This 177-nucleotide RNA was probed chemically with 2A3 and DMS.
[RMDB]
RNA sequence: GGGAACGACUCGAGUAGAGUCGAAAACACACAAACUUCGGUUUGUGUGAAAAGUCAGAAGGUAAAACCAAAUAAAAGCGAAAACUGACAAUAAAAACGCAAAAAUCCCAAGGUUCGCCUUGGGAAACCCAUAACUAAAGUUCGCUUUAGUUAUGGGAAAAGAAACAACAACAACAAC
Reactivity to 2A3 in 0.01 (KOAc 150mM, MgCl2 10mM, bicine 150mM(pH8.5), 24C), signal-to-noise 3, nucleotides 027 to 126: c020a000c000a010c000a000a010a000c010u020u040c070g070g020u010u010u000g000u010g010u000g000a020a000a000a020g010u010c000a000g010a110a050g070g020u130a090a080a090a130c020c030a050a090a080u210a050a110a040a000g030c010g030a050a030a020a030c020u020g010a010c020a010a000u110a040a070a000a010a000c020g010c040a050a060a030a030a260u030c010c000c010a000a010g030g010u030u080c240g070c050c000u010u000g000g000g000a010a000a000
Reactivity to DMS in 0.01 (KOAc 150mM, MgCl2 10mM, bicine 150mM(pH8.5), 24C), signal-to-noise 3, nucleotides 027 to 126: c000a000c000a000c000a000a010a010c000u010u010c170g030g020u000u000u000g020u000g010u000g010a020a040a050a130g010u000c000a010g020a120a140g020g000u020a070a080a090a300c050c030a030a080a130u010a070a030a080a130g000c060g000a130a050a040a040c010u000g010a010c020a060a080u000a040a040a020a050a030c060g010c040a050a080a110a070a150u000c000c000c000a020a010g000g000u000u010c300g000c000c010u000u010g010g010g010a000a010a030